Overview:
An RNA of 170 nucleotides, treated with DMS and 2A3 and read out base by base. The reactions ran in a buffer of 150 mM KOAc, 10 mM MgCl2 and 150 mM bicine (pH 8.5), at 24 C.
RNA sequence: GGGAACGACUCGAGUAGAGUCGAAAAGAAGAGGAAAGGAGGACACGGACGACAAACCGUGAGUUCUAUUGCCCUUUAUUGUUGGGUGCACCCUGGGACCCAGUAAUGCCCGGGGGGAGGCGGGGUAUGAGUGAGACCUUCGGGUCUCACAAAAGAAACAACAACAACAAC
Reactivity to DMS in 0.01 (KOAc 150mM, MgCl2 10mM, bicine 150mM(pH8.5), 24C), signal-to-noise 4, nucleotides 027 to 129: g000a050a050g000a040g020g020a010a020a030g060g010a020g090g000a140c060a050c000g020g030a220c150g010a120c300a130a130a110c020c020g040u070g010a150g000u000u080c060u010a050u090u040g050c090c010c000u040u060u030a000u080u030g000u030u000g000g070g000u070g040c100a070c060c000c040u040g050g010g000a090c060c030c080a080g000u000a050a070u000g000c040c050c000g010g010g000g010g010g030a000g030g060c020g010g000g000g050u020a000u040g000a150
Reactivity to 2A3 in 0.01 (KOAc 150mM, MgCl2 10mM, bicine 150mM(pH8.5), 24C), signal-to-noise 3, nucleotides 027 to 129: g030a020a020g040a000g010g010a030a000a000g020g000a000g000g080a000c000a000c010g030g030a040c060g010a050c220a000a130a070c020c000g010u030g040a050g010u100u000c000u040a120u000u260g040c070c000c040u060u130u060a120u020u130g090u040u010g000g010g000u070g010c020a070c000c010c010u010g000g010g050a010c000c000c020a080g090u070a030a070u050g000c000c000c000g010g010g000g000g000g000a030g000g030c000g000g020g010g000u100a030u090g050a050
2A3 is a SHAPE reagent: it acylates the 2'-hydroxyl of flexible nucleotides of all four kinds. The DMS profile rests on 9,553 reads.